[RMDB]
RNA sequence: GGGAACGACUCGAGUAGAGUCGAAAACAGGAAUGAAUGAUACCGAGGAGUGGCAAAUCACUGAUGGAGCAUUCAACGUGAUGGGCUUCUCGGAACGCGAGAAGGAUGAUCUUUACAAACUGUGCUAGCCUCCAUCAUCGUUCGCGAUGAUGGAGGCAAAAGAAACAACAACAACAAC
Reactivity to DMS in 0.01 (KOAc 150mM, MgCl2 10mM, bicine 150mM(pH8.5), 24C), signal-to-noise 1, nucleotides 027 to 126: c100a060g000g040a130a120u000g000a070a090u010g010a090u040a170c070c040g000a050g030g010a030g000u010g040g010c070a150a100a000u000c000a000c010u040g030a140u010g000g000a190g080c130a070u000u000c010a110a080c210g000u000g010a030u070g020g000g000c010u000u000c010u000c010g120g000a010a040c210g030c040g000a030g000a100a070g000g000a130u000g020a060u050c040u000u010u000a080c130a120a040a110c100u000g010u000g000c070u000a160
Reactivity to 2A3 in 0.01 (KOAc 150mM, MgCl2 10mM, bicine 150mM(pH8.5), 24C), signal-to-noise 1, nucleotides 027 to 126: c010a010g000g120a200a070u100g060a060a000u070g030a090u090a180c000c010g000a010g040g020a000g030u010g070g060c130a070a090a110u060c000a010c010u030g030a100u090g040g150a060g100c080a170u060u160c030a050a100c060g030u010g000a010u130g000g040g030c000u010u020c000u000c000g000g100a020a000c050g060c050g030a070g030a090a000g050g000a030u070g040a010u030c010u050u040u030a100c080a030a090a020c020u150g010u020g020c060u020a000

Structure probing data (DMS and 2A3) for a 177-nucleotide construct. Values cover nucleotides 27 to 126. The reactions ran in a buffer of 150 mM KOAc, 10 mM MgCl2 and 150 mM bicine (pH 8.5), at 24 C. The 2A3 profile rests on 786 reads. The data come from the RNA Mapping Database (RMDB), library OK2TRN.